[RMDB]
RNA sequence: GGGAACGACUCGAGUAGAGUCGAAAACUGGUGGCUGCCGUCCUUCCGCCGCUGCUGAAGAAGUUGCGCAUCGACCCGGCCAUCGUUUCGGGGCCGAUGAUCGCCACCAUCGUUGACGGCACGGGUCCACUAUUCACCUAUUCGUAGGUGAAUAGUGAAAAGAAACAACAACAACAAC
Reactivity to DMS in 0.01 (KOAc 150mM, MgCl2 10mM, bicine 150mM(pH8.5), 24C), signal-to-noise 7, nucleotides 027 to 126: c030u020g010g020u000g010g010c030u000g010c010c010g000u000c030c040u000u000c030c080g010c040c150g010c090u020g000c020u000g010a080a090g000a070a110g010u010u000g000c060g010c080a050u010c060g010a090c000c010c010g010g010c080c040a100u020c130g020u010u020u000c030g010g000g000g010c110c020g000a040u010g000a060u020c070g010c020c010a040c030c020a050u010c090g000u010u000g000a080c040g000g000c010a090c070g010g010g010u000c040
Reactivity to 2A3 in 0.01 (KOAc 150mM, MgCl2 10mM, bicine 150mM(pH8.5), 24C), signal-to-noise 9, nucleotides 027 to 126: c020u030g030g010u020g040g000c040u040g010c010c010g030u030c010c000u040u030c010c030g030c020c050g110c160u190g000c020u050g030a050a040g050a070a020g080u100u080g030c040g000c020a030u030c010g010a010c000c010c000g000g000c030c030a240u150c110g020u040u060u070c040g000g010g010g010c080c010g010a020u050g030a060u120c030g000c010c010a050c020c000a030u080c050g030u030u090g030a050c020g010g010c060a060c060g030g000g020u010c020
This 177-nucleotide RNA was probed chemically with DMS and 2A3. DMS adducts were read by reverse transcription with MarathonRT. The RNA was probed in 150 mM KOAc, 10 mM MgCl2 and 150 mM bicine (pH 8.5) at 24 C. For 2A3 the reverse transcriptase was SuperScript II with manganese. The data come from the RNA Mapping Database (RMDB), library OK1LIB. Reactivities are given for positions 27 through 126.